Structure probing data (2A3 and DMS) for a 177-nucleotide construct. For DMS, 9,653 sequencing reads were counted. For DMS the reverse transcriptase was MarathonRT. High DMS reactivity at an A or C suggests that its Watson-Crick edge is free.
RNA sequence: GGGAACGACUCGAGUAGAGUCGAAAAUGGUGCUGUGCUCUGACCUACUAACUUGGCCUUACUAACCCCAUUUUCUUACUAACCCCAGCCCUGCCGAGCUCUGGGCAAACAAGGCCUUCGGGCCUUGGUAUUACCUACAGUUCGCUGUAGGUAAUACAAAAGAAACAACAACAACAAC
Reactivity to 2A3 in 0.01 (KOAc 150mM, MgCl2 10mM, bicine 150mM(pH8.5), 24C), signal-to-noise 7, nucleotides 027 to 126: u070g020g000u060g030c040u050g020u050g030c020u040c030u060g090a100c010c010u040a060c030u040a140a110c030u050u060g030g020c020c000u050u060a050c050u080a040a100c010c000c020c010a020u060u070u040u020c030u060u070a110c050u040a050a100c010c000c000c020a010g000c010c000c010u030g020c030c040g070a030g030c020u010c020u060g010g010g000c010a020a040a010c010a010a000g000g010c000c000u020u040c120g050g000g000c010c000u010u000g000
Reactivity to DMS in 0.01 (KOAc 150mM, MgCl2 10mM, bicine 150mM(pH8.5), 24C), signal-to-noise 7, nucleotides 027 to 126: u000g010g010u000g010c040u000g010u000g010c050u010c040u000g010a100c060c020u000a090c090u000a060a090c130u000u000g000g010c020c030u000u000a070c090u000a090a140c070c020c020c030a110u000u000u010u010c050u000u000a100c260u020a090a160c070c010c010c080a090g010c020c020c020u000g000c050c040g010a080g010c080u000c040u000g010g000g020c070a070a040a270c010a010a010g000g010c000c000u000u020c200g010g020g020c000c010u000u000g010